Structure probing data (DMS and 2A3) for a 207-nucleotide construct. Source: RMDB library OK3TST, as collected in RNAgym. Conditions: 150 mM KOAc, 10 mM MgCl2 and 150 mM bicine (pH 8.5), 24 C. For 2A3, 2,264 sequencing reads were counted.
RNA sequence: GGGAACGACUCGAGUAGAGUCGAAAAAUCAUACCCCUUCGACUGGUACAUGUGCGGAAACGUUUCUGAGUAUCGCUUCCGUGAUACGUUUAACAACAGCUACUUACUGGUGAACGGCACCUACGUCCCUGAGAACAGGGUACUCUCACUAGGCGGGAUGGAGGACUAUAUUCGUAUAGUCCUCCAUAAAAGAAACAACAACAACAAC
Reactivity to DMS in 0.01 (KOAc 150mM, MgCl2 10mM, bicine 150mM(pH8.5), 24C), signal-to-noise 3, nucleotides 027 to 156: a090u000c080a160u010a220c020c010c020c030u000u010c050g020a060c020u000g000g040u000a080c050a090u000g000u000g000c030g030g010a050a030a020c020g020u000u010u010c060u010g010a200g010u030a030u000c020g000c010u000u000c010c020g020u010g010a020u010a010c030g010u000u010u000a080a170c030a060a090c040a040g010c020u000a090c110u000u000a060c030u000g000g020u000g010a050a070c050g010g000c030a040c030c000u010a070c110g010u010c010c000c050u000g020a190g000a040a080c040a160g000g010g020u000a030c030u000c040u000c020a030c040u000a040g020g020c060g030g010g010
Reactivity to 2A3 in 0.01 (KOAc 150mM, MgCl2 10mM, bicine 150mM(pH8.5), 24C), signal-to-noise 4, nucleotides 027 to 156: a010u120c060a030u090a110c000c010c000c000u050u110c040g100a080c040u060g030g010u030a040c020a140u100g060u050g040c010g000g000a060a020a020c030g020u000u040u040c080u180g130a070g060u130a070u060c010g000c010u060u000c030c060g030u010g010a030u010a090c050g010u010u070u170a090a060c110a010a010c030a010g010c020u080a040c020u110u130a030c010u040g020g020u010g020a060a010c060g040g000c040a050c010c030u050a030c070g030u020c010c000c020u090g030a120g060a230a110c040a020g010g000g010u060a060c020u020c000u000c020a010c000u010a020g030g020c020g010g000g030